[RMDB]
RNA sequence: GGGAACGACUCGAGUAGAGUCGAAAAGUGGGCCUGAUCUAUCUUGUACUGUUCUACUGGCUUGUUCCGCAACGUACCCGCGAGAAUAUAUCGCUGAACGAGGCGAUCAAGAUCAAGAACUACGCCAUGCGAUAAUGGCGUUCGCGCCAUUAUCGCAAAAAGAAACAACAACAACAAC
Reactivity to 2A3 in 0.01 (KOAc 150mM, MgCl2 10mM, bicine 150mM(pH8.5), 24C), signal-to-noise 1, nucleotides 027 to 126: g100u060g020g040g070c060c050u050g000a020u010c050u050a060u020c020u030u070g040u080a140c100u050g010u050u000c000u010a060c030u070g000g000c000u000u000g000u030u010c050c070g000c000a050a020c030g090u150a190c070c040c000g040c000g000a010g040a140a020u300a010u040a040u130c010g000c000u030g020a030a010c020g000a060g000g060c000g000a000u050c040a080a010g030a110u120c010a060a000g040a040a030c040u060a020c060g020c010c070a070
Reactivity to DMS in 0.01 (KOAc 150mM, MgCl2 10mM, bicine 150mM(pH8.5), 24C), signal-to-noise 1, nucleotides 027 to 126: g030u000g020g000g040c080c060u000g010a060u010c060u010a110u000c040u010u010g000u000a090c220u030g040u000u010c040u000a100c270u020g020g000c030u000u000g010u000u000c120c060g000c030a030a040c020g010u000a070c110c030c120g000c010g000a020g000a200a050u000a180u000a070u000c000g020c000u000g010a020a010c040g000a080g000g040c000g000a010u000c070a060a030g010a030u000c020a040a040g000a000a020c050u000a050c070g000c040c030a130
This 177-nucleotide RNA was probed chemically with 2A3 and DMS. DMS adducts were read by reverse transcription with MarathonRT. For 2A3 the reverse transcriptase was SuperScript II with manganese. For 2A3, 1,070 sequencing reads were counted.